[RMDB]
RNA sequence: GGGAACGACUCGAGUAGAGUCGAAAAGCUACAGGGUUUCACGGGUUGCACGUAAUCAUCGGAUCUACUUUCCUAGCAGUAUGCUUACUACGACAACUAAAAUUCCACUUCACAUCCAACCACCACUUCGGCUUUGAAGCCGCAGCCUGAUACUGACCUCCAGAUGUUGGUUCGCCAACAUCUGGAGAAAAGAAACAACAACAACAAC
Reactivity to 2A3 in 0.01 (KOAc 150mM, MgCl2 10mM, bicine 150mM(pH8.5), 24C), signal-to-noise 2, nucleotides 027 to 156: g030c000u100a130c110a090g040g030g030u050u010u040c080a070c030g020g000g030u030u050g000c020a020c080g040u130a070a080u050c010a020u050c010g060g000a030u000c020u120a080c010u060u070u020c010c000u000a010g010c030a030g080u060a000u110g010c000u050u020a120c040u050a070c030g120a000c010a120a010c070u170a020a060a060a080u110u050c040c030a050c050u060u120c110a050c000a070u080c050c010a020a040c000c000a010c020c020a050c000u060u050c040g000g000c000u090u090u290g150a160a000g040c010c020g000c000a000g040c000c040u050g060a090u050a100c010u050g050a030c010